[RMDB]
RNA sequence: GGGAACGACUCGAGUAGAGUCGAAAAUGGAUGAAGAAAGAAUUUUCAAAAUUGGAACGAAACGCCAAAGGUUAUACACCCAAGUAUAACAGAAUCUGUAUAUUCUCAGAUAUGGCAUCACCUGAGAACAUGUUCGACAGUUCGCUGUCGAACAUGUAAAAGAAACAACAACAACAAC
Reactivity to DMS in 0.01 (KOAc 150mM, MgCl2 10mM, bicine 150mM(pH8.5), 24C), signal-to-noise 2, nucleotides 027 to 126: u030g020g000a090u020g040a050a030g000a040a070a060g010a140a020u030u000u060u020c030a100a000a050a110u000u040g000g020a060a070c130g020a080a060a150c200g000c030c030a070a040a130g000g030u000u000a000u010a010c000a030c050c040c020a070a130g020u040a070u000a000a000c010a000g000a050a060u010c040u040g000u020a150u000a010u000u010c060u000c030a000g000a020u020a050u030g020g000c030a050u010c050a040c110c000u000g000a030g000a120
Reactivity to 2A3 in 0.01 (KOAc 150mM, MgCl2 10mM, bicine 150mM(pH8.5), 24C), signal-to-noise 3, nucleotides 027 to 126: u140g080g030a010u040g040a020a110g090a050a150a040g120a090a140u040u040u100u120c090a110a070a020a030u170u120g040g000a060a060c060g020a150a060a000c080g010c030c020a050a060a080g100g010u030u000a000u000a000c030a090c010c010c000a000a050g010u000a010u000a020a000c010a040g040a010a020u030c060u010g080u010a010u010a170u300u020c130u020c030a000g000a090u060a060u110g080g000c000a030u040c010a030c000c030u030g020a010g070a050